[RMDB]
RNA sequence: GGGAACGACUCGAGUAGAGUCGAAAAGAGCGUCGAGAGACGAAGAGAAGUGCACCGAUCAGCAAGGGUGAACGUAAUGGUGCACAAGAGUAAGUCAGUGUAACGUUCUCUGGGCACUGGAGGCAGACGUAAUGCCACUAUUCGUAGUGGCAUUACGAAAAGAAACAACAACAACAAC
Reactivity to 2A3 in 0.01 (KOAc 150mM, MgCl2 10mM, bicine 150mM(pH8.5), 24C), signal-to-noise 6, nucleotides 027 to 126: g060a020g020c010g010u010c020g020a020g010a000g000a080c040g050a120a010g050a010g060a260a010g000u000g000c010a000c000c010g040a100u090c060a020g120c060a070a110g140g040g070u120g060a060a010c020g010u070a090a060u230g010g000u010g010c010a000c000a000a020g060a010g070u130a120a020g030u070c030a020g020u010g040u120a080a040c030g030u050u010c000u010c010u020g020g040g010c010a010c030u030g020g040a060g060g000c040a010g010a090
Reactivity to DMS in 0.01 (KOAc 150mM, MgCl2 10mM, bicine 150mM(pH8.5), 24C), signal-to-noise 5, nucleotides 027 to 126: g000a100g000c010g030u000c020g000a200g010a180g010a030c020g000a060a070g010a100g010a090a100g010u000g000c000a010c000c000g010a070u030c100a120g020c100a090a120g010g000g000u010g010a080a060c110g020u040a070a110u040g000g010u000g010c010a000c010a050a060g000a140g020u020a060a110g000u020c020a030g000u020g000u010a090a070c030g010u000u000c000u010c010u010g000g020g000c010a040c040u000g000g000a110g020g010c130a060g000a180